[RMDB]
RNA sequence: GGGAACGACUCGAGUAGAGUCGAAAAGAUGAGAAUACGUGACUUGGUCAGAGGCGGAAAGCCACAAGCACGAACGAUCCAGUAGAGUAUCGAACCGCCAACAGAUGCACGUUGUGAUCGUGCUAGAGGUAAUCACUCAGUUCGCUGAGUGAUUACCAAAAGAAACAACAACAACAAC
Reactivity to DMS in 0.01 (KOAc 150mM, MgCl2 10mM, bicine 150mM(pH8.5), 24C), signal-to-noise 3, nucleotides 027 to 126: g040a070u020g000a040g000a200a070u080a080c010g020u000g000a130c000u000u010g000g010u020c110a150g040a100g050g000c000g040g000a080a120a120g010c010c020a120c010a030a040g000c000a020c000g000a120a170c050g000a030u000c000c040a130g000u000a090g000a100g020u010a040u020c010g000a100a110c010c020g010c040c050a050a060c130a080g000a020u000g000c050a060c100g000u000u010g000u010g000a030u030c030g000u020g000c000u000a020g000a300
Reactivity to 2A3 in 0.01 (KOAc 150mM, MgCl2 10mM, bicine 150mM(pH8.5), 24C), signal-to-noise 3, nucleotides 027 to 126: g060a080u200g020a020g060a170a020u080a110c040g020u010g110a160c020u020u010g010g040u100c120a070g040a130g110g020c090g070g130a300a100a030g000c000c000a030c000a060a000g030c010a000c060g010a040a020c000g000a010u000c000c000a020g030u130a030g060a010g090u100a080u110c030g010a030a000c010c030g050c030c000a080a080c030a150g060a090u080g000c000a010c030g000u000u180g080u100g010a080u150c030g000u010g030c000u050a020g000a030
Structure probing data (DMS and 2A3) for a 177-nucleotide construct. The 2A3 profile rests on 1,360 reads. The RNA was probed in 150 mM KOAc, 10 mM MgCl2 and 150 mM bicine (pH 8.5) at 24 C.